[RMDB]
RNA sequence: GGGAACGACUCGAGUAGAGUCGAAAAUCUACGAGGCCCUGCGUGACGACGCCCAGCGCAGCGGCAAGCAGACCUACACCUGGGCCGACCUCAACACACUCCUCGGCCACAAAUUCACCGCUGAGCAUACCUCUACAGUAUUCGUACUGUAGAGGUAAAAAGAAACAACAACAACAAC
Reactivity to DMS in 0.01 (KOAc 150mM, MgCl2 10mM, bicine 150mM(pH8.5), 24C), signal-to-noise 7, nucleotides 027 to 126: u000c030u010a090c090g000a190g000g000c020c010c000u000g010c040g020u000g020a130c150g010a120c140g020c020c020c030a230g010c040g000c020a040g020c150g040g010c040a040a100g030c060a070g000a080c050c020u000a100c100a070c070c040u000g010g010g020c030c020g010a090c080c020u000c080a050a070c100a090c100a070c050u000c020c030u000c040g010g010c010c030a070c130a020a060a110u000u000c070a070c020c060g010c050u000g000a090g020c130a230
Reactivity to 2A3 in 0.01 (KOAc 150mM, MgCl2 10mM, bicine 150mM(pH8.5), 24C), signal-to-noise 4, nucleotides 027 to 126: u050c010u040a090c060g070a060g140g000c020c000c000u020g010c010g020u040g040a060c080g010a030c050g040c010c010c010a010g010c020g000c020a020g020c050g030g000c000a020a000g040c000a010g030a070c010c010u080a030c050a040c040c030u030g030g030g000c010c000g030a050c000c020u080c050a110a090c040a010c010a020c090u050c020c010u000c020g010g020c020c000a070c030a030a110a020u140u090c060a050c060c040g010c050u030g020a010g020c020a020
Chemical mapping of a 177-nucleotide RNA with DMS and 2A3. Source: RMDB library OK2TRN, as collected in RNAgym. As a SHAPE reagent, 2A3 marks flexible, mostly unpaired nucleotides at the ribose 2'-OH. Values cover nucleotides 27 to 126.